[RMDB]
RNA sequence: GGGAACGACUCGAGUAGAGUCGAAAAUGUAUCUAUCGCAGUAGCACGUGCAGCAGCUGACUUAUUAGGUCAACCACUUUACAAAUAUUUAGGUGGAUUUAAUGGUAAGCAGUUACCAGUACCAAUGAACGUACCAUUACUUCGGUAAUGGUACGUUAAAAGAAACAACAACAACAAC
Reactivity to DMS in 0.01 (KOAc 150mM, MgCl2 10mM, bicine 150mM(pH8.5), 24C), signal-to-noise 3, nucleotides 027 to 126: u000g000u020a030u020c020u020a090u020c100g020c070a040g010u030a050g010c010a040c050g000u000g010c070a060g000c040a070g020c040u000g010a100c050u020u000a060u000u020a070g000g020u020c050a090a040c030c000a040c020u010u000u000a130c220a060a100a080u100a070u000u010u010a070g030g010u000g000g010a060u000u000u000a060a080u000g000g030u010a020a010g000c160a080g040u010u010a020c070c080a080g010u030a100c070c030a080a070u060g000
Reactivity to 2A3 in 0.01 (KOAc 150mM, MgCl2 10mM, bicine 150mM(pH8.5), 24C), signal-to-noise 5, nucleotides 027 to 126: u160g040u060a080u030c040u020a050u080c050g000c030a020g050u110a030g000c010a010c080g050u040g000c030a020g000c010a010g000c060u010g070a170c010u060u090a050u050u120a090g080g020u050c010a020a020c020c050a010c010u030u080u120a150c160a040a210a110u300a200u230u300u210a040g040g000u000g020g000a050u040u070u050a120a030u040g010g000u000a010a010g090c050a080g030u080u040a020c020c020a030g010u050a030c030c010a080a060u130g040

Background: Structure probing data (DMS and 2A3) for a 177-nucleotide construct. DMS adducts were read by reverse transcription with MarathonRT. Values cover nucleotides 27 to 126. It was measured as part of the RMDB library OK1LIB. DMS (dimethyl sulfate) methylates the pairing face of unpaired adenines and cytosines. For DMS, 4,362 sequencing reads were counted.